[RMDB]
RNA sequence: GGGAACGACUCGAGUAGAGUCGAAAAGGAGAGUUUGAUCCUGGCUCAGGACGAACGCUGGCGGCGUGCCUAAUACAUGCAAGUCGAGCGGACCAAAGGGAGCUUGCUCCUAGAGGUUAGCGGCGAAUAAAUAUAUCGUGUUCGCACGAUAUAUUUAAAAAGAAACAACAACAACAAC
Reactivity to DMS in 0.01 (KOAc 150mM, MgCl2 10mM, bicine 150mM(pH8.5), 24C), signal-to-noise 9, nucleotides 027 to 126: g010g020a070g000a080g010u000u000u000g010a120u000c010c010u000g010g020c140u010c040a070g000g010a060c050g010a040a060c040g010c060u000g010g020c080g010g000c030g030u000g010c030c030u000a100a090u000a140c090a050u000g010c060a080a090g020u000c010g000a120g040c020g000g010a020c010c010a010a300a300g000g000g000a020g010c030u010u010g020c010u000c000c000u000a010g000a300g000g000u000u000a050g030c030g000g000c020g000a100a080
Reactivity to 2A3 in 0.01 (KOAc 150mM, MgCl2 10mM, bicine 150mM(pH8.5), 24C), signal-to-noise 5, nucleotides 027 to 126: g070g010a070g020a020g020u020u040u130g150a230u050c000c010u050g080g060c080u070c140a010g040g010a020c020g020a070a000c030g010c060u040g040g010c020g010g010c020g020u040g000c000c010u070a110a030u140a110c060a040u090g040c030a130a060g000u010c020g040a030g040c040g040g000a010c000c010a020a010a000g010g000g000a000g010c040u060u110g010c000u020c000c000u010a010g000a010g030g000u010u010a030g010c010g030g010c020g020a040a020